Structure probing data (DMS and 2A3) for a 177-nucleotide construct.
RNA sequence: GGGAACGACUCGAGUAGAGUCGAAAAUAAUUCAAAUGGAAGGAGUGAUUUCAAUGACUGCAGAUAUCAUUUCAACAAUUGGUGAUUUUGUAAAAUGGAUUUUAGAUACAGUAAAAAAAUUCACUAAGCCAUUCCAAGAAUUCGUUCUUGGAAUGGCAAAAGAAACAACAACAACAAC
Reactivity to DMS in 0.01 (KOAc 150mM, MgCl2 10mM, bicine 150mM(pH8.5), 24C), signal-to-noise 1, nucleotides 027 to 126: u100a050a060u000u010c000a100a070a180u010g000g000a060a170g010g000a020g000u000g020a000u000u000u000c060a270a130u060g000a060c050u050g020c200a150g000a060u000a000u010c020a000u000u000u010c050a110a090c020a030a130u000u000g000g020u010g000a080u020u000u000u020g000u020a130a010a090a150u000g000g000a020u100u000u000u070a130g000a020u000a090c120a150g010u050a090a040a000a000a040a000a000u000u000c000a000c090u000a150a250
Reactivity to 2A3 in 0.01 (KOAc 150mM, MgCl2 10mM, bicine 150mM(pH8.5), 24C), signal-to-noise 1, nucleotides 027 to 126: u110a000a210u060u000c030a000a080a000u020g050g060a030a130g000g060a040g000u040g000a000u000u080u000c060a070a190u070g080a020c010u040g000c040a050g040a090u010a010u000c000a000u010u050u060c010a000a020c000a060a060u060u070g060g000u000g060a100u000u000u040u150g040u100a020a020a020a020u030g000g030a030u060u030u030u030a090g060a050u190a030c080a060g180u250a000a230a000a100a000a000a050u070u110c000a040c000u020a210a000
For DMS the reverse transcriptase was MarathonRT.
For 2A3 the reverse transcriptase was SuperScript II with manganese.
The 2A3 profile rests on 623 reads.
The reactions ran in a buffer of 150 mM KOAc, 10 mM MgCl2 and 150 mM bicine (pH 8.5), at 24 C.